[RMDB]
RNA sequence: GGGAACGACUCGAGUAGAGUCGAAAAGAGAAGUAAACUGUUAGCCGCCAGGGCCUUGACCCGCUGUGGCCGCGGCGGCCUAGUUGAGACUGAAACGGCGGGUAAGAGCUCGGAGAGACCGAGCAGACAUAUUUAUGGAGUUCGCUCCAUAAAUAUGAAAAGAAACAACAACAACAAC
Reactivity to DMS in 0.01 (KOAc 150mM, MgCl2 10mM, bicine 150mM(pH8.5), 24C), signal-to-noise 6, nucleotides 027 to 126: g000a100g010a090a070g010u010a060a060a130c060u010g010u010u030a150g020c010c000g010c000c010a080g010g000g000c000c000u000u010g000a050c010c000c010g000c020u020g020u000g000g000c000c000g020c140g010g000c020g000g000c030c020u030a040g020u010u010g000a090g020a200c080u010g010a050a040a020c000g000g030c000g030g000g020u000a050a080g010a110g000c000u010c000g000g010a260g020a210g000a120c010c000g000a010g010c010a050g000a260
Reactivity to 2A3 in 0.01 (KOAc 150mM, MgCl2 10mM, bicine 150mM(pH8.5), 24C), signal-to-noise 9, nucleotides 027 to 126: g110a010g060a140a040g060u230a100a090a050c090u110g070u200u190a030g000c000c000g010c010c020a090g000g050g000c010c000u010u020g060a020c000c000c000g000c000u000g000u010g010g000c000c010g170c010g050g000c000g000g000c000c000u020a020g010u010u100g050a040g030a120c090u050g010a050a120a010c010g000g000c000g000g000g000u000a000a010g010a010g010c000u000c000g020g010a190g010a020g060a200c000c000g000a000g000c000a000g000a000